Chemical mapping of a 177-nucleotide RNA with DMS and 2A3. Source: RMDB library OK1LIB, as collected in RNAgym. The reactions ran in a buffer of 150 mM KOAc, 10 mM MgCl2 and 150 mM bicine (pH 8.5), at 24 C. The 2A3 profile rests on 19,475 reads. The DMS profile rests on 62,792 reads.
RNA sequence: GGGAACGACUCGAGUAGAGUCGAAAAGCGGGCUUUUGUGUAUUUUGUUUGGGGGUCUUAAUUGGAUAGAAUGUCACUGAAAUUAUGAGUGUCGAGGCGGGGAGCUCGUAGAGCUUCAGAUGGUGGAGCUCCUGUGUGCAUUCGUGUGCGUAGGGGCAAAAGAAACAACAACAACAAC
Reactivity to DMS in 0.01 (KOAc 150mM, MgCl2 10mM, bicine 150mM(pH8.5), 24C), signal-to-noise 9, nucleotides 027 to 126: g020c080g000g010g000c050u010u010u010u010g010u020g010u010a040u020u010u020u010g010u010u010u010g010g010g010g010g010u000c040u010u020a050a100u020u020g000g010a090u010a060g010a060a070u020g010u010c020a040c030u000g010a070a060a120u040u030a070u020g010a050g010u000g010u010c040g000a080g010g000c060g000g000g000g000a050g010c020u000c020g010u010a070g010a050g010c020u000u000c040a050g010a080u020g010g010u000g000g000a140
Reactivity to 2A3 in 0.01 (KOAc 150mM, MgCl2 10mM, bicine 150mM(pH8.5), 24C), signal-to-noise 9, nucleotides 027 to 126: g060c040g010g020g020c040u090u100u160u080g070u020g020u050a130u030u150u050u060g140u040u080u080g010g000g000g000g000u000c000u040u110a110a090u110u070g040g010a010u020a100g100a080a060u120g020u050c020a000c050u040g050a060a050a030u160u140a110u180g060a030g020u040g030u060c020g020a030g000g030c040g010g010g010g000a010g000c000u000c010g050u060a060g000a010g020c000u030u020c010a030g030a180u110g040g070u050g020g020a020